[RMDB]
About this RNA:
This 177-nucleotide RNA was probed chemically with 2A3. The reactions ran in a buffer of 150 mM KOAc, 10 mM MgCl2 and 150 mM bicine (pH 8.5), at 24 C. 2A3 adducts were read by reverse transcription with SuperScript II with manganese. For 2A3, 696 sequencing reads were counted.

RNA sequence: GGGAACGACUCGAGUAGAGUCGAAAACAUAAGUCGCAUACGUAAAUGCGCUUAAAUAAACCUACGCACAUAUAUUAUGUAUACAUGCGAAUAUCUACGUAUGCAUGCCCGCAUCGUCAACUCCGCGGCACCAGGGAGCAUUCGUGCUCCCUGGUGCAAAAGAAACAACAACAACAAC
Reactivity to 2A3 in 0.01 (KOAc 150mM, MgCl2 10mM, bicine 150mM(pH8.5), 24C), signal-to-noise 3, nucleotides 027 to 126: c000a020u250a050a030g060u130c050g030c040a000u000a090c050g250u190a130a160a010u120g000c080g030c000u060u050a100a000a000u260a050a100a040c070c080u110a100c170g100c060a000c040a050u170a000u120a060u270u210a120u240g100u010a040u040a010c130a160u150g030c040g020a070a020u070a070u210c070u030a030c000g030u010a000u010g020c010a000u120g040c010c000c000g000c030a080u080c060g060u080c070a090a110c000u000c020c000g000c060g100